[RMDB]
RNA sequence: GGGAACGACUCGAGUAGAGUCGAAAAAAAUGGGCUGAAGUUGGGAGAGCAGAAGUCUGCUUUUCAAACAGAGUGGAACGGCGCGGUUAAAGCGUCUCUGUCAAAAAGAAAAAGAAAACAAAUUGAACUGUCUUAAUAAGUUCGCUUAUUAAGACAGAAAAGAAACAACAACAACAAC
Reactivity to DMS in 0.01 (KOAc 150mM, MgCl2 10mM, bicine 150mM(pH8.5), 24C), signal-to-noise 3, nucleotides 027 to 126: a040a070a070u000g000g000g000c000u000g000a070a100g020u000u000g000g020g000a050g000a060g020c010a040g010a210a180g010u020c010u010g020c020u000u000u000u000c030a080a070a040c040a060g000a080g030u000g010g000a060a140c100g000g000c020g020c000g000g000u010u010a060a080a180g010c020g000u000c000u000c030u010g010u000c080a050a020a050a050a040g000a020a030a050a080a050g010a060a020a050a070c110a050a060a110u010u010g000a120a130
Reactivity to 2A3 in 0.01 (KOAc 150mM, MgCl2 10mM, bicine 150mM(pH8.5), 24C), signal-to-noise 1, nucleotides 027 to 126: a020a010a010u130g010g000g000c050u040g040a060a010g050u090u070g000g030g000a050g030a000g000c040a010g060a260a010g140u050c000u030g000c000u020u010u000u000c000a020a010a020c000a000g070a020g080u120g000g060a100a060c080g030g000c000g000c010g000g010u090u190a100a130a000g000c000g050u000c020u020c010u040g100u050c040a070a040a000a080a000g140a080a090a010a030a000g090a020a080a010a030c110a020a080a040u050u070g010a060a050